[RMDB]
RNA sequence: GGGAACGACUCGAGUAGAGUCGAAAAGAUAUGGAGCGUGGCUCGCUUGGAUUUAUGGGUUGAGCCAUACCUCGGAAACGAGGUAUGGCAAGAUGAGCCCAUUGUCAGCGAGAGCGCUCCUAAGUCAGCUGUAGAUAUGCUUCGGCAUAUCUACAGCAAAAGAAACAACAACAACAAC
Reactivity to DMS in 0.01 (KOAc 150mM, MgCl2 10mM, bicine 150mM(pH8.5), 24C), signal-to-noise 1, nucleotides 027 to 126: g010a110u000a300u000g000g000a030g030c000g040u000g000g080c000u000c000g030c010u010u030g000g000a020u000u020u000a000u000g010g010g020u000u000g000a150g000c000c000a000u000a000c000c000u000c010g010g000a050a070a300c000g000a000g000g000u000a000u000g000g000c000a000a010g020a280u000g010a300g000c000c010c010a000u000u000g070u010c000a040g000c000g000a020g010a300g000c000g000c000u000c000c000u030a010a090g010u000c150a300
Reactivity to 2A3 in 0.01 (KOAc 150mM, MgCl2 10mM, bicine 150mM(pH8.5), 24C), signal-to-noise 1, nucleotides 027 to 126: g070a010u130a080u300g030g000a030g000c020g010u180g300g300c060u010c000g010c050u110u300g230g030a080u300u300u170a000u030g060g000g020u050u060g090a010g070c000c000a010u020a020c000c000u000c000g100g000a090a030a020c020g010a020g000g000u000a010u000g000g000c000a010a010g120a060u300g190a010g050c000c000c000a010u000u010g030u030c010a010g000c000g000a000g010a010g040c000g000c020u000c000c010u020a000a010g010u000c070a000
Structure probing data (DMS and 2A3) for a 177-nucleotide construct. The reactions ran in a buffer of 150 mM KOAc, 10 mM MgCl2 and 150 mM bicine (pH 8.5), at 24 C. The data come from the RNA Mapping Database (RMDB), library TTRINS.